The data come from the RNA Mapping Database (RMDB), library OK2TST. The record gives the reactivity of an RNA of 177 nucleotides to 2A3 and DMS.
[RMDB]
RNA sequence: GGGAACGACUCGAGUAGAGUCGAAAAGUGUCGAGCGCGACGAUUUCGGCUUCAGCCUUGGCUGCGCCGUAGUCGUCAUCGAUUUCAUAGGAAAGCUGCAAGGUGCCGUUCAGCGCCCGCUCCGGCAGCAUAGUCCUCCGUUCGCGGAGGACUAUGCAAAAGAAACAACAACAACAAC
Reactivity to 2A3 in 0.01 (KOAc 150mM, MgCl2 10mM, bicine 150mM(pH8.5), 24C), signal-to-noise 1, nucleotides 027 to 126: g140u060g030u020c010g010a030g060c130g010c120g080a000c010g000a000u000u000u070c010g000g030c000u300u290c040a020g020c030c000u160u300g140g000c010u010g000c020g000c000c000g000u000a000g020u000c010g000u000c030a020u020c000g010a010u010u070u160c050a090u110a050g000g110a090a090a020g030c030u030g000c060a120a080g100g000u030g030c010c000g070u090u190c050a040g030c000g040c050c010c000g020c010u020c000c020g010g000c010a010
Reactivity to DMS in 0.01 (KOAc 150mM, MgCl2 10mM, bicine 150mM(pH8.5), 24C), signal-to-noise 2, nucleotides 027 to 126: g000u010g000u000c000g000a030g060c100g050c180g010a010c000g010a030u000u000u000c020g020g000c000u020u000c040a040g020c050c070u010u000g110g020c030u000g010c300g010c000c000g010u010a000g000u040c000g000u000c000a040u010c030g000a050u000u020u000c050a130u030a050g010g000a070a090a090g010c010u000g050c070a210a100g030g020u020g000c000c030g000u000u000c140a110g000c020g010c050c000c140g020c040u000c140c010g030g020c040a050